The record gives the reactivity of an RNA of 177 nucleotides to DMS. The reactions ran in a buffer of 150 mM KOAc, 10 mM MgCl2 and 150 mM bicine (pH 8.5), at 24 C. Source: RMDB library TTRINS, as collected in RNAgym.
RNA sequence: GGGAACGACUCGAGUAGAGUCGAAAAGAUAUGGAGUACGUUGGACGAUCGCCAGGUGGGAGCCUAUCGAUCGGAAACGAUCGUAAGGGCGACGAUCACCGCGAUCGUCCAACGUACUCCUAAGUCACACAGACAAUUAGUUCGCUAAUUGUCUGUGAAAAGAAACAACAACAACAAC
Reactivity to DMS in 0.01 (KOAc 150mM, MgCl2 10mM, bicine 150mM(pH8.5), 24C), signal-to-noise 3, nucleotides 027 to 126: g010a030u010a300u000g010g020a010g010u000a010c000g010u000u000g010g000a010c000g010a010u000c010g010c040c190a180g060g010u020g000g000g000a100g030c000c010u000a300u000c000g010a010u000c000g000g020a080a090a240c010g010a000u010c000g020u010a130a300g010g010g020c020g000a090c280g000a080u010c000a020c020c020g000c000g000a000u010c000g000u000c000c010a000a010c000g000u010a000c010u000c000c000u010a000a050g000u000c030a300